This 177-nucleotide RNA was probed chemically with 2A3 and DMS. For DMS the reverse transcriptase was MarathonRT. For 2A3, 3,964 sequencing reads were counted. Source: RMDB library OK1LIB, as collected in RNAgym. DMS (dimethyl sulfate) methylates the pairing face of unpaired adenines and cytosines. Values are in units of 0.01, from 0 to 300, in steps of 10.

[RMDB]
RNA sequence: GGGAACGACUCGAGUAGAGUCGAAAAGAUAAGAGAUUUCAAGAGGUUUUCCACCAUUAUGCGGAAAAUCUUGUGUGUAAUCAAACUGGUGGGAAGAUACCGAAUUUCUUUGAUGAACCAUAGGUGGAUGGACGAUAGUAUUCGUACUAUCGUCCAUAAAAGAAACAACAACAACAAC
Reactivity to 2A3 in 0.01 (KOAc 150mM, MgCl2 10mM, bicine 150mM(pH8.5), 24C), signal-to-noise 6, nucleotides 027 to 126: g060a010u080a040a010g030a020g000a010u050u140u100c130a130a070g060a100g080g000u020u000u000u000c000c020a020c000c010a030u080u090a040u300g070c120g050g020a050a060a050a080u060c060u080u100g070u010g000u010g000u090a030a070u100c140a030a060a140c100u080g020g000u080g030g030g030a030a020g090a060u130a040c010c000g040a060a040u020u020u000c020u030u020u040g050a100u060g030a030a040c010c000a060u080a070g100g130u140g120g080
Reactivity to DMS in 0.01 (KOAc 150mM, MgCl2 10mM, bicine 150mM(pH8.5), 24C), signal-to-noise 4, nucleotides 027 to 126: g020a080u010a020a020g000a060g000a010u000u020u020c040a100a080g010a120g020g020u000u000u000u000c000c000a020c050c120a120u040u030a070u050g020c070g010g020a040a030a040a040u030c050u020u010g010u010g020u020g020u000a050a030u010c070a070a090a110c190u000g000g000u020g000g020g010a050a040g010a070u010a050c070c020g010a060a030u010u000u000c000u000u000u010g000a160u010g000a110a120c060c020a070u010a060g000g030u020g000g000